[RMDB]
Chemical mapping of a 207-nucleotide RNA with DMS and 2A3.
For DMS, 7,808 sequencing reads were counted.
The RNA was probed in 150 mM KOAc, 10 mM MgCl2 and 150 mM bicine (pH 8.5) at 24 C.
DMS adducts were read by reverse transcription with MarathonRT.
It was measured as part of the RMDB library OK3TST.
RNA sequence: GGGAACGACUCGAGUAGAGUCGAAAAUGACUGCGCUGCCGCGACUGAUGGGCGAAGUGCGUGAGUUGAAGUCGGGACGACCGGCCAAGAACUCGCUGCUCGGCUCGAUGGAGUUGUACGGUGGUGAGUUCGGCAUGGAUGACUACCGCAUGCAGGGUAACUCCUAUCGAUUCGUCGAUAGGAGUUAAAAAGAAACAACAACAACAAC
Reactivity to DMS in 0.01 (KOAc 150mM, MgCl2 10mM, bicine 150mM(pH8.5), 24C), signal-to-noise 3, nucleotides 027 to 156: u010g010a070c020u000g010c060g010c010u000g040c050c010g000c010g000a150c010u000g000a130u010g010g020g000c030g020a090a050g030u000g010c060g040u000g010a080g030u010u000g000a200a110g010u010c030g020g010g000a160c150g010a200c030c000g020g010c020c030a070a190g010a050a010c010u000c010g000c010u000g010c000u000c040g010g020c020u000c010g020a200u000g030g010a080g030u000u000g020u000a070c060g010g020u000g000g030u000g000a050g010u010u000c000g010g000c050a070u020g010g010a120u010g000a110c030u010a100c030c010g000c050a130u000g000c040a120g000g010g030
Reactivity to 2A3 in 0.01 (KOAc 150mM, MgCl2 10mM, bicine 150mM(pH8.5), 24C), signal-to-noise 3, nucleotides 027 to 156: u110g010a000c020u020g020c010g010c040u070g020c020c010g040c040g070a050c110u140g090a100u090g070g000g000c040g010a100a040g050u060g060c070g030u050g030a010g010u000u050g080a060a010g050u030c000g010g000g030a120c110g060a070c020c000g010g000c000c000a090a010g060a020a000c020u010c010g000c010u020g010c030u030c090g070g000c020u020c020g150a180u260g170g060a010g010u020u000g070u140a140c070g010g000u020g020g000u020g000a000g010u030u030c020g020g000c080a090u130g030g030a080u130g020a030c040u090a050c030c010g030c050a030u070g000c020a030g020g000g010